[RMDB]
RNA sequence: GGGAACGACUCGAGUAGAGUCGAAAAAGUCCAUAUGCCCAUCUUUGCUGGAUCGGAUGGAUGUUUAUACCCGCUAUGGAUGCCUAUUACUGAAAUGUAAUAGAUGCCUAAUACUCUCUCUCAGGGAGAGAGUUUAGAUGCCUCCAAAGGUCAUGCUUAGUCGGAUUUUAUUCGUAAAAUCCGACUAAAAAGAAACAACAACAACAAC
Reactivity to 2A3 in 0.01 (KOAc 150mM, MgCl2 10mM, bicine 150mM(pH8.5), 24C), signal-to-noise 1, nucleotides 027 to 156: a010g030u030c050c000a010u010a040u140g030c000c010c030a050u030c030u040u180u200g070c150u200g080g020a050u000c010g000g000a000u000g000g000a010u030g050u070u230u000a090u070a070c000c030c000g030c050u050a110u050g010g000a020u020g010c000c000u000a000u030u000a000c000u010g070a150a060a110u160g000u000a000a000u000a010g050a020u070g030c000c000u070a090a080u050a150c000u000c000u020c000u010c000u010c140a150g020g300g020a000g000a000g000a010g000u000u000u000a010g000a020u050g010c000c000u020c020c000a090a090a020g100g010u060c120a070u110g010c000u000